[RMDB]
RNA sequence: GGGAACGACUCGAGUAGAGUCGAAAAAAGAACGCGAUCGCGAACGCCUGGGGCCUGAUUCAACCGGUCAUCGGUGCGUUCCGGGCCGGCGUCGAGAUCGCCGGCAACGUCAUCUCGGGCGUGUGGAACGGGCUCGUCGACACCGUCACGUCGGUGGCUCUAUGGGAGCAUUCGUGCUCCCAUAGAGAAAAGAAACAACAACAACAAC
Reactivity to 2A3 in 0.01 (KOAc 150mM, MgCl2 10mM, bicine 150mM(pH8.5), 24C), signal-to-noise 4, nucleotides 027 to 156: a000a000g110a050a020c050g010c030g040a050u090c030g030c050g070a070a020c000g030c040c000u080g030g040g010g050c020c000u120g030a180u140u090c080a080a040c030c020g060g080u180c090a190u260c040g020g010u090g030c040g010u060u000c010c000g000g020g000c000c000g000g000c000g020u050c030g010a040g020a100u040c000g000c000c000g000g020c020a050a050c030g030u040c010a090u040c040u040c080g060g010g000c040g010u090g030u050g080g040a050a050c040g010g020g000c070u050c060g050u030c030g040a020c010a020c020c010g050u070c070a030c120g110u090c010g030g010u020g040g000
Reactivity to DMS in 0.01 (KOAc 150mM, MgCl2 10mM, bicine 150mM(pH8.5), 24C), signal-to-noise 2, nucleotides 027 to 156: a040a060g000a060a070c040g030c000g000a060u010c040g000c060g000a070a060c030g010c010c030u020g050g020g000g040c010c010u000g000a120u000u000c140a180a100c020c050g020g060u010c100a070u000c000g030g020u000g050c080g000u000u020c060c000g040g030g030c000c030g050g000c000g060u000c040g000a110g010a060u000c000g040c020c020g060g040c050a090a020c020g000u010c040a090u000c060u000c030g030g020g020c000g010u010g000u010g040g020a070a120c050g000g020g020c050u000c040g000u000c050g020a060c020a040c010c040g000u000c070a050c090g000u010c020g030g030u000g010g000